[RMDB]
RNA sequence: GGGAACGACUCGAGUAGAGUCGAAAAGCUCUGGGAGACAGAUCGAACAACAAAGAGAGAUCGAAAAUCUUAGAGGAGAGAACGAAUCUGUCGACUUCACUAGGACAUUGUCGAUCAGAGGUCCAAAGACCAUUCAUUCCUUCGGGGAUGGAUGGUCAAAAGAAACAACAACAACAAC
Reactivity to DMS in 0.01 (KOAc 150mM, MgCl2 10mM, bicine 150mM(pH8.5), 24C), signal-to-noise 9, nucleotides 027 to 126: g040c010u000c000u010g010g000g010a300g010a020c030a120g000a020u000c000g000a300a250c030a050a160c260a090a140a080g010a050g010a300g010a010u000c000g010a040a100a130a180u000c000u000u010a000g010a070g000g000a020g000a110g000a120a020c030g000a090a110u040c110u030g010u000c000g000a290c010u000u000c010a120c010u010a010g000g000a030c110a080u020u010g010u000c000g000a300u050c000a010g010a020g010g000u010c020c020a020a050a020
Reactivity to 2A3 in 0.01 (KOAc 150mM, MgCl2 10mM, bicine 150mM(pH8.5), 24C), signal-to-noise 9, nucleotides 027 to 126: g040c000u000c000u000g000g000g000a040g000a000c010a010g010a010u010c020g050a070a090c050a080a030c040a040a300a010g110a020g000a000g000a010u010c020g030a040a040a020a060u000c000u000u010a010g010a020g040g000a000g000a000g010a080a030c030g030a060a140u180c150u210g130u040c030g060a180c000u010u000c010a000c020u020a010g000g020a010c020a130u070u130g010u010c000g000a010u050c010a000g000a000g000g010u000c000c000a020a020a010

Record summary: The record gives the reactivity of an RNA of 177 nucleotides to DMS and 2A3. The reactions ran in a buffer of 150 mM KOAc, 10 mM MgCl2 and 150 mM bicine (pH 8.5), at 24 C. Source: RMDB library OK1LIB, as collected in RNAgym. High DMS reactivity at an A or C suggests that its Watson-Crick edge is free.